An RNA of 207 nucleotides, treated with 2A3 and read out base by base. It was measured as part of the RMDB library ARCHII. 2A3 adducts were read by reverse transcription with SuperScript II with manganese.

RNA sequence: GGGAACGACUCGAGUAGAGUCGAAAACGCACUGAGUUCGCUCUCGCUGCUUGAUCGAGAGUGACUCUGUCGGCCUGGGAGCGUCUCCGACCCAGUGUCCGGCAUCGUUGAGGAGACUUGCCGGUCAGAUCAGGCCACAGGAUCUGACUGGGACAUGCCCAAUGAUCUACUUCGGUAGAUCAUUGGGAAAAGAAACAACAACAACAAC
Reactivity to 2A3 in 0.01 (KOAc 150mM, MgCl2 10mM, bicine 150mM(pH8.5), 24C), signal-to-noise 4, nucleotides 027 to 156: c050g020c030a060c130u080g010a010g030u210u220c040g010c000u000c000u000c020g010c040u170g000c070u240u210g100a220u200c040g000a000g000a000g000u010g000a000c000u000c000u000g000u000c000g000g010c000c000u000g000g000g000a050g000c180g030u010c000u000c000c000g010a010c000c000c000a000g010u000g040u080c020c010g000g000c010a090u090c050g060u040u160g090a030g020g000a000g000a000c010u020u210g010c000c000g000g000u010c010a000g000a010u010c000a030g040g180c090c020a090c060a090g120g000a000u000c000u010g000a000c000u000g000g000g000a140c200a300u090g020

Reactivities are given for positions 27 through 156. The reactions ran in a buffer of 150 mM KOAc, 10 mM MgCl2 and 150 mM bicine (pH 8.5), at 24 C.